Structure probing data (DMS and 2A3) for a 177-nucleotide construct.
For DMS the reverse transcriptase was MarathonRT.

RNA sequence: GGGAACGACUCGAGUAGAGUCGAAAAGUUCAAUCUCUGAUUCCUCAGAGUGGUCCUGAUUCUCACCCUGUUUGCACUGGUCGUGAUGGCGGUGCACAUGGUAGUCCAUCUCUCCGGGUCAUUGGGCGAUGAUGCGAACGUUCGCGUUCGCAUCAUCAAAAGAAACAACAACAACAAC
Reactivity to DMS in 0.01 (KOAc 150mM, MgCl2 10mM, bicine 150mM(pH8.5), 24C), signal-to-noise 1, nucleotides 027 to 126: g010u000u000c110a060a110u000c030u000c030u020g020a110u000u000c120c110u000c110a030g020a070g030u000g000g010u010c000c030u000g000a160u000u000c100u000c110a090c100c040c030u000g000u000u000u000g030c040a060c020u010g020g050u020c010g000u000g030a160u010g020g010c020g000g010u000g020c020a110c100a020u000g000g010u000a080g010u030c040c030a040u010c060u000c020u000c020c040g000g000g000u000c010a080u030u010g030g020g020c140
Reactivity to 2A3 in 0.01 (KOAc 150mM, MgCl2 10mM, bicine 150mM(pH8.5), 24C), signal-to-noise 1, nucleotides 027 to 126: g020u040u070c010a110a080u050c010u050c000u070g070a090u150u180c020c030u000c090a000g050a020g000u010g010g020u070c010c020u060g010a150u090u060c010u020c050a020c000c040c030u060g150u010u170u130g010c080a000c010u120g270g070u030c010g110u080g290a220u280g050g000c050g030g030u010g000c020a000c010a030u030g040g000u010a040g030u040c010c010a130u000c020u000c060u020c040c060g040g000g000u020c010a080u100u120g010g060g030c020